[RMDB]
Chemical mapping of a 177-nucleotide RNA with 2A3 and DMS. The RNA was probed in 150 mM KOAc, 10 mM MgCl2 and 150 mM bicine (pH 8.5) at 24 C. The data come from the RNA Mapping Database (RMDB), library OK2TST. The DMS profile rests on 1,059 reads. DMS adducts were read by reverse transcription with MarathonRT. For 2A3, 1,263 sequencing reads were counted. Reactivities are given for positions 27 through 126.

RNA sequence: GGGAACGACUCGAGUAGAGUCGAAAAGAUGCUAUGCGUAAAUUGCGUCGAUGGUGAACUCGGACGUAAGGACAACCUCAAUGAGUUGGAGCUAAUUGUUGGUUGCGCAUUCUUUACGGAGGGAAUAGAGGGUUCAAGCAUUCGUGCUUGAACCCUCAAAAGAAACAACAACAACAAC
Reactivity to 2A3 in 0.01 (KOAc 150mM, MgCl2 10mM, bicine 150mM(pH8.5), 24C), signal-to-noise 2, nucleotides 027 to 126: g090a050u080g020c060u050a040u130g060c050g080u110a070a210a230u100u070g000c000g010u040c050g010a060u080g050g040u130g070a050a020c040u010c050g030g150a030c000g050u000a010a000g010g030a000c030a030a000c000c000u000c020a040a010u060g020a060g020u120u240g240g050a210g000c000u010a070a060u050u000g080u040u070g000g000u030u010g060c130g000c080a150u080u060c020u000u060u030a030c030g020g040a070g040g090g040a010a020u070a080
Reactivity to DMS in 0.01 (KOAc 150mM, MgCl2 10mM, bicine 150mM(pH8.5), 24C), signal-to-noise 2, nucleotides 027 to 126: g010a050u010g020c040u000a000u000g010c070g020u000a040a080a120u000u000g070c000g010u000c020g050a180u000g020g020u000g030a110a200c050u000c020g000g050a130c040g030u040a010a000g000g040a160c060a010a050c010c010u000c010a040a000u000g000a060g000u000u010g000g010a120g090c020u020a060a050u000u000g000u000u000g020g000u000u000g000c290g000c130a110u000u000c040u000u010u000a070c070g060g000a160g010g000g010a120a100u000a220